[RMDB]
RNA sequence: GGGAACGACUCGAGUAGAGUCGAAAACGGUCCACCUUGCCGAUGCCGCGUCGCGGUAGCACGUUCACGACAUGUAGCUCUCGGGGCGCGGCGGUGACGUCCAGGGUGCGCGCGACAUGCGCCCGCACAUUACGUUGCUGUUCGCAGCAACGUAAUGAAAAGAAACAACAACAACAAC
Reactivity to 2A3 in 0.01 (KOAc 150mM, MgCl2 10mM, bicine 150mM(pH8.5), 24C), signal-to-noise 4, nucleotides 027 to 126: c020g030g010u020c050c010a030c020c020u040u080g030c030c010g120a090u210g000c010c000g000c010g020u010c010g000c000g050g000u010a000g000c010a020c050g050u110u120c160a080c250g210a060c080a100u120g020u040a060g010c010u000c000u010c020g130g010g010g000c000g000c000g000g000c000g000g000u020g020a040c030g020u020c030c020a060g000g000g040u040g000c030g000c000g000c020g080a080c050a180u230g010c030g030c000c030c000g050c000a090
Reactivity to DMS in 0.01 (KOAc 150mM, MgCl2 10mM, bicine 150mM(pH8.5), 24C), signal-to-noise 8, nucleotides 027 to 126: c080g000g010u000c100c030a060c020c030u010u000g000c140c020g010a160u010g010c000c000g010c000g020u000c020g010c000g000g000u000a020g010c010a050c020g010u000u010c160a190c250g000a100c200a090u000g000u000a110g000c000u000c020u000c010g010g000g010g010c000g000c000g010g010c000g000g000u010g000a100c070g010u000c090c040a070g000g010g020u000g010c160g030c080g000c040g010a100c140a090u020g010c050g010c010c020c020g010c160a130
This 177-nucleotide RNA was probed chemically with 2A3 and DMS. 2A3 adducts were read by reverse transcription with SuperScript II with manganese. The reactions ran in a buffer of 150 mM KOAc, 10 mM MgCl2 and 150 mM bicine (pH 8.5), at 24 C. For 2A3, 9,660 sequencing reads were counted. It was measured as part of the RMDB library OK2TRN.